Source information:
The record gives the reactivity of an RNA of 177 nucleotides to DMS and 2A3. For DMS the reverse transcriptase was MarathonRT. 2A3 is a SHAPE reagent: it acylates the 2'-hydroxyl of flexible nucleotides of all four kinds. For 2A3 the reverse transcriptase was SuperScript II with manganese.
[RMDB]
RNA sequence: GGGAACGACUCGAGUAGAGUCGAAAAAUUCUGCCGUUCUAGAACCCGCUCGAGAUCUCGUGGAGCUUUCAAUCGUAGCUCCAACCACGGUUCAGUGCUUCCAAUUCAGCCUGCCGUAUUGGAUUCAACCUAGUAGUGACUUCGGUCACUACUAGGUAAAAGAAACAACAACAACAAC
Reactivity to DMS in 0.01 (KOAc 150mM, MgCl2 10mM, bicine 150mM(pH8.5), 24C), signal-to-noise 2, nucleotides 027 to 126: a130u000u000c040u010g000c020c030g030u000u000c050u010a160g000a100a100c050c030c040g000c010u010c030g010a070g000a070u000c020u000c040g060u000g020g000a030g010c010u000u000u010c180a100a110u020c130g000u000a010g010c020u000c000c000a040a080c120c060a040c020g010g010u000u000c030a030g030u010g010c000u020u000c070c170a060a210u020u010c110a070g000c000c010u000g020c040c040g010u000a080u000u010g000g000a110u010u000c100a090
Reactivity to 2A3 in 0.01 (KOAc 150mM, MgCl2 10mM, bicine 150mM(pH8.5), 24C), signal-to-noise 2, nucleotides 027 to 126: a000u070u010c020u070g070c030c020g050u070u040c060u040a060g030a140a100c000c000c020g000c050u020c020g070a070g010a130u010c010u010c120g090u080g010g000a000g000c000u050u120u150c150a150a190u130c030g060u050a000g020c000u000c000c000a000a000c000c000a000c020g040g000u170u160c020a020g020u030g230c030u130u010c070c050a080a170u160u130c010a030g000c000c010u030g000c000c000g000u030a150u020u230g070g000a040u090u050c050a050